Chemical mapping of a 177-nucleotide RNA with 2A3 and DMS. Values cover nucleotides 27 to 126. The RNA was probed in 150 mM KOAc, 10 mM MgCl2 and 150 mM bicine (pH 8.5) at 24 C. The 2A3 profile rests on 18,449 reads.
[RMDB]
RNA sequence: GGGAACGACUCGAGUAGAGUCGAAAAAGGGAGAUCUCUUACCACGGAAGGGAAGCUUUCGAGAAGCUGCGAGGGCAGAUACUUGAGCAGCGGGAUGUGUUGGUUGAAUAUCCUCAAAUUUUGACCAAUCAUUAAUACGGUUCGCCGUAUUAAUGAUAAAAGAAACAACAACAACAAC
Reactivity to 2A3 in 0.01 (KOAc 150mM, MgCl2 10mM, bicine 150mM(pH8.5), 24C), signal-to-noise 8, nucleotides 027 to 126: a000g040g000g000a050g000a060u020c020u000c010u060u090a190c030c030a040c090g080g040a020a020g040g020g020a050a080g060c010u030u050u060c060g050a070g010a110a030g020c010u020g000c020g010a050g010g010g000c030a030g050a240u160a110c010u030u040g020a010g030c010a000g000c030g010g000g000a050u060g060u020g010u150u040g040g000u020u020g010a030a010u040a030u080c020c050u100c030a050a100a060u060u070u020u050g020a020c020c000a000
Reactivity to DMS in 0.01 (KOAc 150mM, MgCl2 10mM, bicine 150mM(pH8.5), 24C), signal-to-noise 9, nucleotides 027 to 126: a100g010g000g000a080g000a110u000c030u000c030u000u000a140c060c070a120c150g010g010a070a040g010g000g010a080a100g010c040u000u000u000c060g010a120g010a110a100g020c030u000g010c050g000a200g000g000g010c050a060g010a120u010a060c050u000u000g010a270g010c030a030g020c050g010g000g010a040u000g010u010g010u000u000g010g000u000u000g010a040a040u000a060u000c030c030u010c160a040a050a110u000u000u000u000g010a060c050c040a110